[RMDB]
RNA sequence: GGGAACGACUCGAGUAGAGUCGAAAAGCAUGGUGGUGCAUGUCUAUAGUCCCAGCUGCUUGGAAAGCUAAGGCAGGAGGAUCACUUGAGCCCGGGAGGCAGAGGCAGUGAGCCAUAUGGUGCCACUGCACUCCAGCCUGAGUGACGGAACGAGACACGAGGCAGUAUUAUUCGUAAUACUGCCUCGAAAAGAAACAACAACAACAAC
Reactivity to DMS in 0.01 (KOAc 150mM, MgCl2 10mM, bicine 150mM(pH8.5), 24C), signal-to-noise 1, nucleotides 027 to 156: g000c050a110u010g020g010u000g030g000u000g060c060a040u000g020u020c070u000a180u000a100g000u000c000c000c000a120g020c000u000g000c010u000u020g010g000a100a110a160g020c050u000a030a050g050g010c000a100g000g000a150g070g010a070u000c020a070c000u000u000g000a110g000c000c020c000g000g040g030a050g000g010c010a130g000a020g040g010c000a020g010u010g000a300g030c040c060a220u010a080u000g030g020u000g050c050c000a030c010u020g050c010a080c020u000c000c000a080g000c000c010u020g010a080g010u000g000a140c130g020g000a070a090c000g000a180g000a080c150a230
Reactivity to 2A3 in 0.01 (KOAc 150mM, MgCl2 10mM, bicine 150mM(pH8.5), 24C), signal-to-noise 2, nucleotides 027 to 156: g030c020a040u070g040g010u010g000g000u030g010c000a010u060g020u060c050u030a160u070a050g060u030c000c000c000a000g020c010u100g000c010u030u020g070g080a130a110a070g000c040u040a000a060g040g040c000a000g000g060a070g000g000a070u030c000a040c000u030u040g010a010g020c030c010c000g030g030g010a100g000g020c000a000g000a020g000g010c000a020g010u000g010a040g040c010c010a150u210a160u170g160g020u090g020c060c000a020c000u000g040c000a090c030u000c000c000a010g020c000c000u000g030a010g000u020g010a020c070g010g020a080a030c060g020a020g050a050c060a000